Structure probing data (DMS and 2A3) for a 177-nucleotide construct. For DMS the reverse transcriptase was MarathonRT. It was measured as part of the RMDB library OK2TRN. Values are in units of 0.01, from 0 to 300, in steps of 10.
RNA sequence: GGGAACGACUCGAGUAGAGUCGAAAAUUGGAUAGUAAAUGCAGAAGGAGACAUUGUGGAACAGAGGCCCGUCACGGAGUACCUCAAAACCAUGGCAGCUGGGACUAAUGUCAAAGUGAUAAUGCUGUGUGAACAUUCAUUUCGAUGAAUGUUCACAAAAAGAAACAACAACAACAAC
Reactivity to DMS in 0.01 (KOAc 150mM, MgCl2 10mM, bicine 150mM(pH8.5), 24C), signal-to-noise 3, nucleotides 027 to 126: u020u010g010g000a110u000a060g000u000a050a070a100u000g020c050a030g010a100a080g020g010a190g010a060c050a050u000u010g000u000g000g010a080a110c120a170g000a040g000g020c110c060c120g000u010c120a120c140g010g010a070g010u000a190c020c030u010c090a020a080a130a120c040c050a060u000g020g000c020a020g020c030u000g000g010g000a060c080u010a040a040u000g000u000c020a030a090a100g010u000g010a060u010a060a110u010g020c050u000g020
Reactivity to 2A3 in 0.01 (KOAc 150mM, MgCl2 10mM, bicine 150mM(pH8.5), 24C), signal-to-noise 2, nucleotides 027 to 126: u080u020g040g040a030u040a120g110u110a030a080a130u060g070c010a030g060a130a050g090g020a070g000a040c000a000u000u110g050u040g110g000a050a020c010a190g010a000g040g000c040c020c050g140u230c040a030c140g000g000a010g050u020a020c000c030u010c010a040a080a000a020c000c000a000u010g020g030c010a010g000c050u040g000g010g040a020c020u060a180a010u150g000u030c000a120a080a030g180u130g060a040u050a170a000u080g000c020u010g000